Structure probing data (2A3) for a 207-nucleotide construct. Reactivities are rounded to 0.1 and cut off at 0 and 3. 2A3 adducts were read by reverse transcription with SuperScript II with manganese. The RNA was probed in 150 mM KOAc, 10 mM MgCl2 and 150 mM bicine (pH 8.5) at 24 C.

RNA sequence: GGGAACGACUCGAGUAGAGUCGAAAAGUCCGAUUUCAACUUGGAUGAUCCCCAAAUUUUCGACGUCGUUAGUGAACACAUUGAUAUAACCCAGACCAGUGAUGCACCCAAUAGUAAUCGAAAUCUUCUCUUGAAUAACUCAAUGUUGCAGGAGAAAGGGGUAAAAUGGAUUCGUCCAUUUUACCCCAAAAGAAACAACAACAACAAC
Reactivity to 2A3 in 0.01 (KOAc 150mM, MgCl2 10mM, bicine 150mM(pH8.5), 24C), signal-to-noise 2, nucleotides 027 to 156: g010u000c000c000g010a030u020u170u300c120a100a110c100u060u030g040g000a000u020g040a120u080c040c010c000c000a000a090a060u100u050u020u080c080g010a040c070g040u000c000g020u020u020a030g010u100g160a110a040c050a040c030a060u040u100g080a030u090a020u060a300a180c020c040c000a000g000a070c060c020a000g100u020g000a050u080g000c040a010c010c000c010a050a030u290a000g110u220a050a150u200c080g110a180a070a110u060c060u020u030c020u000c020u000u010g060a080a060u190a140a020c010u010c070a020a070u120g000u000u060g030c010a000g020g020a000g040a050a000a020